[RMDB]
RNA sequence: GGGAACGACUCGAGUAGAGUCGAAAACAUUGCAGCUUCGGCUGCAAUGAAUCUCUGGUCUCUACGACUCUACUCCAUAGAGGCUGGAGUAGUCGUUCCCGAUGGCGCCCCAAUUCGUUGGGGCGAAUUUGAUCAUUUAAUUCGUUAAAUGAUCAAAAAAAGAAACAACAACAACAAC
Reactivity to 2A3 in 0.01 (KOAc 150mM, MgCl2 10mM, bicine 150mM(pH8.5), 24C), signal-to-noise 4, nucleotides 027 to 126: c000a000u010u010g010c000a000g000c000u070u100c240g190g000c000u000g000c010a000a000u000g000a010a010u030c020u000c020u050g010g040u020c010u020c010u050a070c130g020a010c010u010c010u010a010c010u010c020c000a040u080a170g050a020g030g010c030u020g020g010a020g010u070a020g000u010c000g000u000u010c000c000c000g000a050u050g090g090c000g000c000c000c000c000a000a000u050u040c130g030u040u000g000g000g000g000c000g000a000a000
Reactivity to DMS in 0.01 (KOAc 150mM, MgCl2 10mM, bicine 150mM(pH8.5), 24C), signal-to-noise 4, nucleotides 027 to 126: c000a000u000u000g000c000a010g010c000u000u010c210g030g010c000u000g020c010a000a000u000g000a120a090u010c030u000c020u010g010g000u000c010u000c020u000a100c130g000a050c010u000c020u000a010c010u000c030c170a070u010a040g000a030g000g010c080u000g000g000a030g010u000a020g010u000c000g000u000u000c000c000c000g000a040u010g010g010c010g010c000c000c000c000a020a040u000u020c150g010u000u000g010g000g000g020c000g000a000a010